[RMDB]
RNA sequence: GGGAACGACUCGAGUAGAGUCGAAAAUAUUGGCAUUAGUAUGUGAGAUAAUAGAUACAUGUAAUGGUGUCAUACCAGAUGUUUUACAUACUGCGUUAUUAUAUCUUUCUAUAAUAGCACAAUGAUAUACGUCAUGUAUAUUUGUACUAUCGUACGGUCUCUAGCUAACCUUCGGGUUAGCUAGAGAAAAAGAAACAACAACAACAAC
Reactivity to 2A3 in 0.01 (KOAc 150mM, MgCl2 10mM, bicine 150mM(pH8.5), 24C), signal-to-noise 3, nucleotides 027 to 156: u200a010u030u080g030g000c020a010u040u090a020g040u020a010u050g020u030g010a060g040a050u080a210a050u110a120g120a050u110a110c040a050u110g090u270a090a040u080g040g020u030g060u070c030a010u070a180c030c040a030g030a090u060g020u010u030u050u030a020c020a000u020a050c000u040g000c030g040u050u030a060u090u020a040u050a030u080c060u010u130u030c070u030a020u040a030a030u000a030g020c010a010c010a110a080u120g050a010u000a000u010a010c020g050u060c210a140u210g060u000a000u000a020u030u030u050g000u000a010c020u020a050u040c070g040u070a040c050g060g030
Reactivity to DMS in 0.01 (KOAc 150mM, MgCl2 10mM, bicine 150mM(pH8.5), 24C), signal-to-noise 2, nucleotides 027 to 156: u000a070u010u000g010g060c040a110u010u010a050g030u000a000u020g010u000g030a100g020a070u000a070a170u020a110g020a200u000a050c030a110u020g030u020a090a140u000g010g050u010g000u010c160a190u000a160c050c030a110g020a100u000g020u000u000u010u010a040c030a030u000a040c000u000g020c110g030u010u000a060u000u000a110u000a080u000c020u000u000u000c010u000a050u000a020a020u000a010g010c000a020c000a050a070u000g010a030u010a020u000a020c000g020u000c250a100u020g010u000a000u000a010u010u000u010g010u000a000c010u000a010u000c020g010u000a000c090g030g020